[RMDB]
RNA sequence: GGGAACGACUCGAGUAGAGUCGAAAAACCUUUGUGGACAACGGGGUAUGUUGUCAGCGAUAUUCUCGACCCAUUGGGUCGAGAUAUCGCUUGGAUUUACAUACGCCGUGUUGUCCACUCUGGUAAAGUACCAUCGAAGUUCGCUUCGAUGGUACAAGGAGAUGAUACGGUUCGCCGUAUCAUCUCCAAAAGAAACAACAACAACAAC
Reactivity to 2A3 in 0.01 (KOAc 150mM, MgCl2 10mM, bicine 150mM(pH8.5), 24C), signal-to-noise 2, nucleotides 027 to 156: a000c000c000u030u000u030g000u000g000g010a000c000a010a010c010g010g000g020g000u000a000u000g000u040u010g020u020c020a000g000c000g020a000u000a020u180u120c000u000c010g030a040c040c030c150a300u210u300g000g000g010u000c000g000a000g000a010u010a000u010c000g020c010u000u030g010g000a010u300u000u300a000c000a000u000a020c040g150c140c000g000u020g020u030u010g010u030c000c000a000c000u000c000u000g000g010u030a040a080a100g010u000a010c010c000a000u000c000g010a000a000g000u020u150c140g120c170u000u000c000g010a010u000g000g000u000a000c000a000a020